This 177-nucleotide RNA was probed chemically with 2A3 and DMS. For DMS, 22,339 sequencing reads were counted. Values cover nucleotides 27 to 126. The RNA was probed in 150 mM KOAc, 10 mM MgCl2 and 150 mM bicine (pH 8.5) at 24 C. The data come from the RNA Mapping Database (RMDB), library OK1LIB.

RNA sequence: GGGAACGACUCGAGUAGAGUCGAAAACACACAGAGAAACUCUGGGCGAGAAGCACGUACCAGAAACCUCACCCUGAGGUAAAGGCCGGACUGUAUAUAACCGUCAAAGGGAGGUAGACUUUGGUGGACAACGAUACAUUUUCGAAUGUAUCGUUGUAAAAGAAACAACAACAACAAC
Reactivity to 2A3 in 0.01 (KOAc 150mM, MgCl2 10mM, bicine 150mM(pH8.5), 24C), signal-to-noise 9, nucleotides 027 to 126: c070a000c010a000c010a010g040a010g050a080a090a040c050u000c010u020g000g010g010c020g030a120g060a120a040g100c080a030c090g020u050a300c010c010a010g010a050a060a020c000c000u010c010a100c030c020c050u100g020a020g020g020u060a100a060a040g080g000c010c010g020g020a040c020u030g050u050a040u010a010u030a200a070c010c010g020u030c040a050a020a010g040g020g020a040g030g050u030a030g040a060c000u030u030u050g040g000u020g020g020
Reactivity to DMS in 0.01 (KOAc 150mM, MgCl2 10mM, bicine 150mM(pH8.5), 24C), signal-to-noise 8, nucleotides 027 to 126: c090a090c160a080c060a050g010a070g020a110a080a110c120u010c020u000g000g000g000c020g010a100g010a120a090g010c130a110c030g010u000a100c030c010a060g010a050a110a080c040c000u000c020a130c060c040c030u010g010a060g000g010u000a040a080a080g000g020c070c040g000g000a070c050u000g010u010a070u020a080u020a060a120c010c010g020u000c020a030a030a050g000g010g010a060g010g000u000a060g000a070c030u000u000u000g010g010u010g010g000